[RMDB]
RNA sequence: GGGAACGACUCGAGUAGAGUCGAAAAUAUCUAAGAUGGUGCUAUGUUCGAAGAGGGUUUUCCUUCUGAGGACGUAGGAUUAGAUUGGAUACAAGUCGUAACAAGGUUGCUGUAGGAGAACCUGCAGGAAAUGAAUCAGGUUCGCCUGAUUCAUUUCAAAAGAAACAACAACAACAAC
Reactivity to DMS in 0.01 (KOAc 150mM, MgCl2 10mM, bicine 150mM(pH8.5), 24C), signal-to-noise 4, nucleotides 027 to 126: u000a010u000c000u000a000a020g010a100u000g010g020u000g010c010u000a000u000g020u000u000c010g000a300a020g000a030g010g010g010u000u010u010u010c000c000u000u010c010u010g000a300g000g000a000c010g020u000a000g000g000a010u000u010a010g010a140u000u010g000g010a030u000a030c110a080a070g010u000c030g020u000a050a110c060a120a100g020g010u000u010g000c010u010g000u000a040g010g010a200g010a070a110c030c000u000g000c070a030g010
Reactivity to 2A3 in 0.01 (KOAc 150mM, MgCl2 10mM, bicine 150mM(pH8.5), 24C), signal-to-noise 1, nucleotides 027 to 126: u040a000u040c000u000a000a040g010a040u040g000g040u080g080c020u000a010u020g010u000u030c010g010a020a000g000a000g050g000g010u030u080u200u230c000c000u020u000c020u000g000a020g000g020a000c000g010u000a010g010g000a010u010u000a010g030a020u010u010g000g000a000u000a040c050a010a090g080u030c010g080u090a140a030c060a120a050g070g040u090u060g110c020u010g000u040a020g030g040a290g010a270a270c000c000u000g010c020a000g000